An RNA of 177 nucleotides, treated with 2A3 and read out base by base. Conditions: 150 mM KOAc, 10 mM MgCl2 and 150 mM bicine (pH 8.5), 24 C. It was measured as part of the RMDB library OK1LIB. Values cover nucleotides 27 to 126.
[RMDB]
RNA sequence: GGGAACGACUCGAGUAGAGUCGAAAACUCUGUCUUUUGGCCAUUCAAAGGCGAUGACUACGGCAAUUUGCAAAUUAUGCUCAGCGGGGCAGGGAGUGGUGCAGCAUUGUCAGUGGUGCAACUACAAACCACCGUCCUGGUUCGCCAGGACGGUGGUAAAAGAAACAACAACAACAAC
Reactivity to 2A3 in 0.01 (KOAc 150mM, MgCl2 10mM, bicine 150mM(pH8.5), 24C), signal-to-noise 2, nucleotides 027 to 126: c010u000c030u000g120u140c060u110u090u070u080g120g000c000c010a020u060u080c110a210a170a020g050g000c000g090a110u240g020a010c060u020a000c000g080g000c010a000a080u000u030u050g050c030a030a140a120u140u120a080u250g010c060u000c010a040g010c040g080g000g040g010c030a090g000g060g000a010g000u010g040g000u000g000c000a050g060c010a040u000u110g060u050c030a000g050u040g050g000u020g140c000a000a070c040u230a010c080a010a090